[RMDB]
RNA sequence: GGGAACGACUCGAGUAGAGUCGAAAAGCUGUUGAGCUAAGACUACACCAGAGCAUCCCACCGUUCGGGAGAAUGAGCGGUUCCCGUCUGAGGGUCAGAAAGACUAAGCCUGUGAAUGAGCGGUAGGUCAAUACCCAGUCUGGACAGCAGUUCGACUUCUUACACAAUGCUUCGGCAUUGUGUAAGAAAAAGAAACAACAACAACAAC
Reactivity to 2A3 in 0.01 (KOAc 150mM, MgCl2 10mM, bicine 150mM(pH8.5), 24C), signal-to-noise 1, nucleotides 027 to 156: g020c010u030g000u090u090g150a000g030c070u080a170a000g000a080c000u050a020c110a030c100c030a000g010a050g070c020a080u070c000c000c000a010c000c010g000u010u010c050g020g030g040a130g050a080a090u140g010a020g050c000g000g000u010u000c000c020c000g090u060c010u090g050a070g000g040g020u140c110a030g070a100a140a000g020a000c000u010a050a070g000c000c020u070g020u030g070a160a160u140g040a050g020c050g050g030u050a030g010g000u040c070a040a040u050a070c000c000c050a010g020u010c030u010g000g010a020c000a010g000c010a040g020u060u080c070g030a100c090u020
Chemical mapping of a 207-nucleotide RNA with 2A3.
The data come from the RNA Mapping Database (RMDB), library RSTRND.
Conditions: 150 mM KOAc, 10 mM MgCl2 and 150 mM bicine (pH 8.5), 24 C.
For 2A3, 539 sequencing reads were counted.